This 177-nucleotide RNA was probed chemically with 2A3 and DMS. For DMS the reverse transcriptase was MarathonRT. The data come from the RNA Mapping Database (RMDB), library RFMREP.

[RMDB]
RNA sequence: GGGAACGACUCGAGUAGAGUCGAAAAUCUCACCCUGGAGUGGGGAGAACGUGAAAUGCUCCGGCGCCAGAGGAUGUGGCUGCGGCCGAUUAGGUAGACGGUGGGGUAACGGCCCACCGUGCCAGUAGUCACAAUACUGGUUCGCCAGUAUUGUGACAAAAGAAACAACAACAACAAC
Reactivity to 2A3 in 0.01 (KOAc 150mM, MgCl2 10mM, bicine 150mM(pH8.5), 24C), signal-to-noise 1, nucleotides 027 to 126: u010c010u020c000a070c000c010c000u040g060g040a060g020u070g040g300g000g000a040g030a030a020c060g120u100g170a100a040a090u130g060c000u000c030c000g000g000c040g000c000c020a010g020a110g100g030a050u070g070u110g090g040c020u020g010c040g100g000c020c000g020a090u110u200a070g040g030u070a090g020a070c000g000g000u000g030g020g000g020u000a030a000c060g090g000c000c000c010a000c020c000g010u000g000c000c000a050g070u080a030
Reactivity to DMS in 0.01 (KOAc 150mM, MgCl2 10mM, bicine 150mM(pH8.5), 24C), signal-to-noise 2, nucleotides 027 to 126: u000c000u000c010a200c010c000c000u010g010g010a060g050u000g010g050g010g030a050g010a040a130c150g030u000g000a100a090a100u010g000c000u000c020c020g020g010c000g000c010c000a030g000a060g030g000a090u010g020u010g000g050c000u000g000c090g010g010c000c050g030a160u010u020a050g000g010u000a130g000a020c000g000g000u000g000g000g000g010u000a060a100c300g000g000c020c000c000a000c010c000g040u000g020c100c000a150g020u020a080